Structure probing data (DMS and 2A3) for a 177-nucleotide construct. The RNA was probed in 150 mM KOAc, 10 mM MgCl2 and 150 mM bicine (pH 8.5) at 24 C. It was measured as part of the RMDB library OK1LIB.

RNA sequence: GGGAACGACUCGAGUAGAGUCGAAAACGGCCGUACCGGUACUGCAGGGCAAGCAGCUGCGUGACGCCUGCAAACACGAACAGAAUGUUCAGGGCCCACCAGGGCUGUUGAUUCUGGAAGGCCAGGCUAUGAAAAGAUCGUUCGCGAUCUUUUCAUAAAAAGAAACAACAACAACAAC
Reactivity to DMS in 0.01 (KOAc 150mM, MgCl2 10mM, bicine 150mM(pH8.5), 24C), signal-to-noise 7, nucleotides 027 to 126: c100g000g010c000c010g020u030a090c160c030g000g000u010a070c140u010g000c010a020g000g000g020c020a050a080g000c000a240g000c160u050g000c020g010u000g010a090c100g000c000c000u000g010c020a030a080a070c070a070c060g000a100a080c030a070g010a050a040u020g010u020u020c040a130g010g010g010c010c000c020a170c250c240a130g000g000g000c000u000g010u040u000g000a110u000u000c000u000g000g020a140a150g000g010c020c000a090g000g010c120
Reactivity to 2A3 in 0.01 (KOAc 150mM, MgCl2 10mM, bicine 150mM(pH8.5), 24C), signal-to-noise 9, nucleotides 027 to 126: c020g010g010c000c020g030u080a080c050c060g010g040u090a120c040u020g000c020a010g000g050g020c040a090a030g020c020a050g100c060u260g020c060g050u030g030a080c080g110c070c000u010g010c000a000a090a000c090a010c040g020a070a000c000a030g070a110a060u140g070u180u100c030a040g050g030g000c010c000c010a060c050c080a130g030g000g000c010u040g060u130u050g010a030u030u000c010u010g020g070a110a040g030g000c010c010a010g080g010c020